Structure probing data (DMS and 2A3) for a 177-nucleotide construct. The RNA was probed in 150 mM KOAc, 10 mM MgCl2 and 150 mM bicine (pH 8.5) at 24 C. For DMS, 1,469 sequencing reads were counted. DMS adducts were read by reverse transcription with MarathonRT.
RNA sequence: GGGAACGACUCGAGUAGAGUCGAAAACUAAGUACCCGGAGGAAGAGAAAACAAUAGUGAUUCCGUAAGUAGCGGCGAGCGAACGCGGAUUAGCCCAAACCGAUAAUGUUCCGGCAUUGUCGGGGUUACGAAGGUAUUGGUUCGCCAAUACCUUCGUAAAAGAAACAACAACAACAAC
Reactivity to DMS in 0.01 (KOAc 150mM, MgCl2 10mM, bicine 150mM(pH8.5), 24C), signal-to-noise 1, nucleotides 027 to 126: c080u010a010a140g040u030a050c050c000c000g000g000a000g000g000a050a010g000a100g010a060a010a160a040c080a030a030u000a120g020u000g010a100u000u000c000c020g000u000a000a020g050u000a110g000c030g000g030c300g000a300g000c010g000a030a050c300g000c000g000g000a050u000u050a060g040c000c000c000a000a130a100c030c010g020a040u000a000a000u030g000u060u010c110c010g030g000c030a000u000u000g000u000c010g000g030g000g000u050u030
Reactivity to 2A3 in 0.01 (KOAc 150mM, MgCl2 10mM, bicine 150mM(pH8.5), 24C), signal-to-noise 3, nucleotides 027 to 126: c020u050a080a040g090u110a170c000c010c020g020g010a020g040g070a130a070g060a040g020a070a020a030a000c040a030a110u050a030g040u030g020a100u070u060c000c000g000u010a000a010g000u000a000g000c010g140g040c200g130a040g010c000g000a000a000c020g000c000g050g000a030u010u020a000g020c000c000c000a080a030a010c010c000g000a020u010a000a000u000g000u050u050c050c050g050g000c010a000u000u000g000u000c000g000g010g000g000u060u000